[RMDB]
RNA sequence: GGGAACGACUCGAGUAGAGUCGAAAAGUCUGAUGUGAUCAGCUUGUCACCCAGUAGCUGAGUGGCCUUUAGAGGUGGUACUUUAGAGGCUUAGUGUUGAGGCCAGAGACUGGACGUUCAGGAGCGGCAGUGUCUGGCCGUUCGCGGCCAGACACUGAAAAGAAACAACAACAACAAC
Reactivity to DMS in 0.01 (KOAc 150mM, MgCl2 10mM, bicine 150mM(pH8.5), 24C), signal-to-noise 2, nucleotides 027 to 126: g000u010c040u010g020a080u010g030u010g020a110u010c010a010g010c020u010u010g010u000c120a240c040c020c000a130g000u010a070g040c010u000g000a090g020u000g020g020c010c000u000u000u000a030g010a000g000g030u010g020g010u000a130c020u010u000u000a020g010a030g000g010c010u000u000a030g030u010g010u000u010g000a150g000g000c020c000a040g000a080g010a040c030u010g010g000a110c060g000u000u000c100a120g010g010a070g000c050g030g000